[RMDB]
RNA sequence: GGGAACGACUCGAGUAGAGUCGAAAAAUCACAUAGAUCACUUCGGAUUCUUCAAUCUACUUUCCGACAUGAAUUGGUGCUCACCCGACUAGCCCACCACAUACCGUUAAUUUCUUUAAUGUUAGGGCCUAUCGGGCCACUUCGGUGGCCCGAUAGGAAAAGAAACAACAACAACAAC
Reactivity to 2A3 in 0.01 (KOAc 150mM, MgCl2 10mM, bicine 150mM(pH8.5), 24C), signal-to-noise 2, nucleotides 027 to 126: a000u120c060a090c060a080u230a090g080a140u160c030a030c070u010u000c060g040g040a110u030u030c000u060u100c020a040a040u000c060u060a040c000u040u010u000c000c030g010a000c060a110u130g240a260a120u110u130g080g000u130g050c010u000c000a070c000c000c000g010a000c000u030a000g000c010c000c000a000c010c010a050c000a050u150a060c020c020g180u030u070a090a120u120u200u100c030u020u150u190a190a170u110g000u150u060a130g050g000g000
Structure probing data (2A3) for a 177-nucleotide construct. Source: RMDB library OK1LIB, as collected in RNAgym. The 2A3 profile rests on 487 reads.